[RMDB]
RNA sequence: GGGAACGACUCGAGUAGAGUCGAAAAGAUAUGGACUUUCCUUUUGACGGAUUCCCGUUCGGAAACGAACGAACAUCCGAUAAGGAAGUCCUAAGUCAAAAGACCCGUUAGUUCGCUAACGGGUCAAGAUUUCUAUUAUGUUCGCAUAAUAGAAAUCAAAAGAAACAACAACAACAAC
Reactivity to 2A3 in 0.01 (KOAc 150mM, MgCl2 10mM, bicine 150mM(pH8.5), 24C), signal-to-noise 3, nucleotides 027 to 126: g020a000u060a050u100g000g000a010c010u200u290u280c010c000u050u030u050u200g290a110c040g000g000a000u090u080c090c040c020g000u010u010c010g020g040a030a060a060c000g000a000a010c000g000a030a010c000a020u000c000c030g050a050u030a060a000g000g010a000a000g000u000c000c000u000a040a030g020u000c030a000a020a100a280g000a010c000c000c000g000u000u000a010g000u020u070c300g000c220u000a000a000c000g020g000g000u000c000a010a000
Reactivity to DMS in 0.01 (KOAc 150mM, MgCl2 10mM, bicine 150mM(pH8.5), 24C), signal-to-noise 5, nucleotides 027 to 126: g010a040u000a300u010g000g010a020c000u000u000u010c000c000u000u000u000u000g010a170c120g010g000a010u000u010c230c160c020g010u000u000c000g000g000a090a090a150c000g000a000a000c000g000a050a110c230a040u000c000c000g010a110u000a020a020g000g000a030a010g000u000c000c010u000a010a070g010u000c030a070a090a150a150g000a010c000c000c000g010u000u000a010g000u000u020c250g020c000u000a000a010c010g000g010g000u000c010a000a030